[RMDB]
RNA sequence: GGGAACGACUCGAGUAGAGUCGAAAACUACCCGGCCGCUGGUCGUCGUGGCCGACGACGGCGGUCCGGUCGACUGGCCGGUUCGGUCCGAGCACACGAUCCGUCUUGUCGCGCGCGCGAAGUCGCGAACCGAAGCGCGCACGACGGUGCGACUCGCUGUAUGUUCGAAGUUCGCUUCGAACAUACAAAAAGAAACAACAACAACAAC
Reactivity to 2A3 in 0.01 (KOAc 150mM, MgCl2 10mM, bicine 150mM(pH8.5), 24C), signal-to-noise 2, nucleotides 027 to 156: c030u120a080c020c000c000g020g010c010c010g040c080u210g300g020u050c010g000u010c000g080u250g300g160c240c030g050a000c000g010a000c060g000g010c000g020g020u030c000c000g020g030u030c010g050a030c050u040g040g010c000c020g110g000u120u170c010g000g080u040c030c060g030a020g010c090a040c000a010c150g010a020u000c000c000g020u000c030u070u230g000u080c080g010c000g020c000g030c000g000c030g150a190a020g070u170c030g080c080g070a060a010c000c030g090a040a000g030c010g000c020g040c010a010c010g010a000c000g000g000u040g030c030g040a070c000u010c070g000c050